[RMDB]
RNA sequence: GGGAACGACUCGAGUAGAGUCGAAAAAGGUGCCGGGUACCGGCACGCCGCCUUCACUCAGGAGUACCUCAAUGGACUUUUCGCCGACCAAGCCAGCUUUCAGGUCGCGUCGUGGGCGAUGGCCGACUGGCUCCCACCGGGUGGCGCGGUGAGCACGCUCGUUCUAGGAAUUCGUUCCUAGAACGAGAAAAGAAACAACAACAACAAC
Reactivity to 2A3 in 0.01 (KOAc 150mM, MgCl2 10mM, bicine 150mM(pH8.5), 24C), signal-to-noise 2, nucleotides 027 to 156: a000g090g010u020g000c020c010g000g000g100u180a230c140c000g010g000c010a000c010g010c010c010g020c000c020u090u180c040a070c040u090c080a090g000g010a060g040u230a300c010c010u120c080a150a180u220g050g000a190c000u070u150u160u070c080g010c070c020g060a040c040c050a050a050g010c000c010a030g110c130u170u300u220c110a110g060g000u040c010g010c020g000u070c040g050u140g090g140g020c040g230a230u060g000g000c000c020g010a060c090u020g000g010c030u090c010c020c010a060c060c040g040g050g000u000g010g010c020g000c000g060g000u040g020a050g020c110a020c110g000